[RMDB]
RNA sequence: GGGAACGACUCGAGUAGAGUCGAAAAGAUAUGGAACUUUAGGACAUGAAGCUGGUCGGAAACGACCAGACUUCAACAGCCUGGGAGUUCCUAAGUCAAAAGAGGUGACGCUUCGGCGUCACCUCAAGAUCACUGUAUGGUUCGCCAUACAGUGAUCAAAAGAAACAACAACAACAAC
Reactivity to DMS in 0.01 (KOAc 150mM, MgCl2 10mM, bicine 150mM(pH8.5), 24C), signal-to-noise 2, nucleotides 027 to 126: g000a020u030a040u010g000g000a010a030c010u010u000u000a010g020g010a030c070a140u010g000a010a000g010c020u000g000g000u010c000g020g000a030a020a040c000g020a020c010c000a000g000a020c000u000u000c000a110a070c170a160g000c000c000u000g010g030g010a020g000u000u000c000c000u000a000a060g020u000c020a130a080a140a150g000a020g030g010u000g010a010c000g010c010u010u030c280g040g030c000g010u000c000a010c000c000u000c000a020a030
Reactivity to 2A3 in 0.01 (KOAc 150mM, MgCl2 10mM, bicine 150mM(pH8.5), 24C), signal-to-noise 2, nucleotides 027 to 126: g000a000u010a000u060g000g000a020a000c010u020u070u050a000g000g010a040c080a300u300g000a030a000g040c000u000g020g010u000c000g020g000a050a010a010c000g010a000c010c060a030g000a010c000u000u010c010a040a030c050a020g020c000c010u090g100g180g000a050g000u020u040c020c000u000a000a000g000u030c020a060a040a040a250g030a000g000g040u040g010a010c030g040c050u130u190c300g140g010c010g060u030c010a000c010c000u000c000a000a000
Overview:
Structure probing data (DMS and 2A3) for a 177-nucleotide construct. It was measured as part of the RMDB library TTRDES. For DMS, 2,753 sequencing reads were counted. For 2A3 the reverse transcriptase was SuperScript II with manganese. The RNA was probed in 150 mM KOAc, 10 mM MgCl2 and 150 mM bicine (pH 8.5) at 24 C.